[RMDB]
RNA sequence: GGGAACGACUCGAGUAGAGUCGAAAACUGGGCUGGUUCUAAAAUCAUUGCUGUUAUCUACAGCGGCAGGGAGUCUCUAAUAUUCCCAUCGGGAACCUAUUACUGUGUCACCACUAAGGCUAAGUCCGCGCUGCUUAGUUCGCUAAGCAGAAAAGAAACAACAACAACAAC
Reactivity to 2A3 in 0.01 (KOAc 150mM, MgCl2 10mM, bicine 150mM(pH8.5), 24C), signal-to-noise 9, nucleotides 027 to 129: c030u030g010g030g010c030u020g000g030u070u040c040u100a050a060a060a130u140c090a110u090u130g000c000u010g020u080u070a170u140c080u080a030c000a030g000c000g040g000c010a040g020g010g030a060g030u000c010u000c010u070a070a100u050a110u140u030c000c010c000a040u080c060g020g000g000a020a020c000c020u030a110u090u100a070c060u050g020u030g030u130c010a040c070c000a030c040u040a050a030g010g000c010u030a040a010g030u010c010c010g020c020g000
Reactivity to DMS in 0.01 (KOAc 150mM, MgCl2 10mM, bicine 150mM(pH8.5), 24C), signal-to-noise 9, nucleotides 027 to 129: c070u030g030g030g030c010u020g010g000u050u010c050u050a070a080a090a080u020c100a150u060u050g000c020u020g010u000u000a090u070c140u060a090c100a000g000c000g030g050c090a080g000g000g000a060g000u020c030u000c000u000a070a060u040a120u030u020c020c020c000a130u050c120g000g000g000a070a050c020c070u000a040u040u050a060c110u040g000u000g000u000c060a100c070c010a060c080u030a050a050g000g010c060u030a050a080g020u000c030c050g020c120g000
The data come from the RNA Mapping Database (RMDB), library 15KLIB. The record gives the reactivity of an RNA of 170 nucleotides to 2A3 and DMS. Reactivities are given for positions 27 through 129. For DMS, 62,363 sequencing reads were counted. The reactions ran in a buffer of 150 mM KOAc, 10 mM MgCl2 and 150 mM bicine (pH 8.5), at 24 C.